Source: RMDB library OK2TRN, as collected in RNAgym. Chemical mapping of a 177-nucleotide RNA with DMS. Conditions: 150 mM KOAc, 10 mM MgCl2 and 150 mM bicine (pH 8.5), 24 C.
RNA sequence: GGGAACGACUCGAGUAGAGUCGAAAAAGGCUCCUAGGAUGUUCUGGGUCCUGGGCUGGCAACAGAGAAGAACCGCAGGAUGCCAGGGAAGGUGGUAUUGGUGGGCCACUCUUGAGGCUGUGGCCGGUAGUACCUACUGCUUCGGCAGUAGGUACUAAAAAGAAACAACAACAACAAC
Reactivity to DMS in 0.01 (KOAc 150mM, MgCl2 10mM, bicine 150mM(pH8.5), 24C), signal-to-noise 1, nucleotides 027 to 126: a130g000g010c030u000c010c070u010a090g000g000a060u000g010u000u010c030u000g010g000g010u000c050c000u000g010g000g040c100u010g000g000c110a080a100c060a060g020a120g000a190a110g010a050a160c070c010g000c060a060g000g000a050u000g020c000c030a060g010g000g000a050a070g050g010u000g000g010u000a170u010u000g000g010u000g050g000g000c040c040a050c030u010c080u000u000g000a080g010g010c060u000g010u000g000g010c020c000g000g000